[RMDB]
RNA sequence: GGGAACGACUCGAGUAGAGUCGAAAACGCUGCUGCCCAGAGAUGGGCUGUGGCACCAGGUUAACGACCUCGGGUAUGGUAACAACGCCUGAGAUUGGACAAUCCGCAGCCAAGCUCCCUCAUGGGAAGAAGGUUCAGAGACUAGAUGGUUGUGGGUCAUUAACAACUGCUUCGGCAGUUGUUAAUGAAAAGAAACAACAACAACAAC
Reactivity to 2A3 in 0.01 (KOAc 150mM, MgCl2 10mM, bicine 150mM(pH8.5), 24C), signal-to-noise 2, nucleotides 027 to 156: c100g000c000u000g000c010u000g000c000c000c000a010g000a030g000a090u050g020g000g000c010u020g000u020g010g020c010a010c010c010a030g030g090u090u120a080a080c060g030a010c020c010u030c030g050g000g010u070a140u290g100g020u110a140a000c080a030a060c100g000c000c010u030g030a040g010a120u080u110g030g040a010c010a040a020u020c000c000g000c010a000g000c000c010a050a020g030c030u000c040c030c010u110c130a110u220g000g050g050a070a080g040a070a050g060g000u110u160c060a060g030a000g000a130c070u070a040g020a100u060g010g050u020u000g010u020g000g000g050u010
Reactivity to DMS in 0.01 (KOAc 150mM, MgCl2 10mM, bicine 150mM(pH8.5), 24C), signal-to-noise 1, nucleotides 027 to 156: c100g020c020u000g020c000u000g010c000c000c000a040g040a300g020a270u000g000g000g040c000u000g000u000g000g060c000a110c060c010a170g000g020u000u000a070a150c090g000a060c020c020u020c000g050g080g000u000a080u000g030g030u000a200a080c100a070a150c040g030c020c010u000g000a020g010a020u000u010g000g000a100c080a080a070u010c000c010g060c010a030g000c010c010a100a220g040c050u010c000c000c000u000c220a180u000g000g010g000a040a140g000a070a160g030g000u000u000c100a110g000a170g030a060c000u000a040g000a160u010g000g060u000u000g040u010g010g020g010u000